RNA sequence: GGGAACGACUCGAGUAGAGUCGAAAAUUUGCGCAUCGAACAGCGUAAAAUCGCCAACCGCGAUGCGUCCGUUUUCCGGGCGGAGCGUUCCGGCGAUCAUUUUCAAAAGCGUCGUCUUGCCCGCACAAGGGAUAAUUUACUUCGGUAAAUUAUCCCUAAAAGAAACAACAACAACAAC
Reactivity to DMS in 0.01 (KOAc 150mM, MgCl2 10mM, bicine 150mM(pH8.5), 24C), signal-to-noise 3, nucleotides 027 to 126: u000u000u000g000c020g000c000a020u010c030g000a080a070c270a090g000c000g010u000a080a040a110a120u000c000g000c000c040a100a110c300c140g000c010g010a050u000g000c000g020u010c050c100g000u010u000u020u000c200c020g010g020g000c030g010g000a080g010c010g020u000u000c140c080g010g010c030g000a040u020c100a090u000u000u000u010c220a100a050a090a120g010c070g040u000c030g000u000c040u010u010g010c020c020c010g030c220a120c190a070
Reactivity to 2A3 in 0.01 (KOAc 150mM, MgCl2 10mM, bicine 150mM(pH8.5), 24C), signal-to-noise 1, nucleotides 027 to 126: u020u020u080g020c000g000c020a030u040c040g050a120a090c030a050g010c000g000u040a010a020a000a200u100c000g000c020c010a050a060c050c000g000c010g080a060u100g070c000g000u000c010c020g000u020u030u130u010c060c000g050g030g020c030g040g030a100g040c020g010u070u040c040c010g000g010c020g010a000u000c010a040u030u130u110u130c070a110a080a000a030g040c010g020u010c000g000u000c060u090u130g060c000c000c030g000c050a050c010a080
This 177-nucleotide RNA was probed chemically with DMS and 2A3. The data come from the RNA Mapping Database (RMDB), library OK2TST. DMS adducts were read by reverse transcription with MarathonRT. For DMS, 1,710 sequencing reads were counted. For 2A3 the reverse transcriptase was SuperScript II with manganese. Conditions: 150 mM KOAc, 10 mM MgCl2 and 150 mM bicine (pH 8.5), 24 C. DMS (dimethyl sulfate) methylates the pairing face of unpaired adenines and cytosines.